[RMDB]
RNA sequence: GGGAACGACUCGAGUAGAGUCGAAAAGUUCGAGCGGUCGAACUAGAGGGGAGUGUAACCUUGGUACCGCCGUAGAAACUGGAUUACGACGUCUACCCGGGAUUCAAACUCGGCCCCUCUCAGAGGUGACUCUGAGUGAAAGGUCUGUGCUAAGCACGUAUUAACGAAGGUUCGCCUUCGUUAAUACAAAAGAAACAACAACAACAAC
Reactivity to 2A3 in 0.01 (KOAc 150mM, MgCl2 10mM, bicine 150mM(pH8.5), 24C), signal-to-noise 5, nucleotides 027 to 156: g010u010u020c010g010a050g070c030g040g070u130c080g070a090a040c060u170a100g060a030g070g060g040g010a160g060u220g090u230a080a080c000c000u000u020g030g010u030a040c000c050g000c020c000g000u040a050g090a080a090a020c040u060g040g050a100u170u190a110c020g010a000c040g240u010c000u010a010c010c010c000g000g000g030a080u110u130c070a140a050a070c030u000c000g050g000c000c000c010c010u000c000u000c010a010g000a010g000g040u110g040a070c000u000c000u010g000a000g000u020g010a120a030a010g040g000u010c040u100g030u030g020c070u160a180a000g020c050a020c060
Reactivity to DMS in 0.01 (KOAc 150mM, MgCl2 10mM, bicine 150mM(pH8.5), 24C), signal-to-noise 2, nucleotides 027 to 156: g000u000u010c010g010a280g000c080g010g040u010c090g050a080a070c020u010a120g050a090g000g000g000g000a200g030u010g000u010a110a090c050c030u010u000g030g030u010a050c060c040g030c000c030g080u020a060g010a160a080a140c050u010g030g010a300u010u000a110c050g030a050c000g010u000c040u000a020c030c010c000g000g020g020a200u000u000c030a110a060a050c040u000c040g020g020c000c000c060c000u000c000u000c020a040g010a030g000g020u020g000a250c010u010c020u000g010a030g000u020g000a070a060a060g020g030u000c020u000g000u000g000c010u010a120a180g000c050a180c110
This 207-nucleotide RNA was probed chemically with 2A3 and DMS.
2A3 adducts were read by reverse transcription with SuperScript II with manganese.
Values cover nucleotides 27 to 156.
The RNA was probed in 150 mM KOAc, 10 mM MgCl2 and 150 mM bicine (pH 8.5) at 24 C.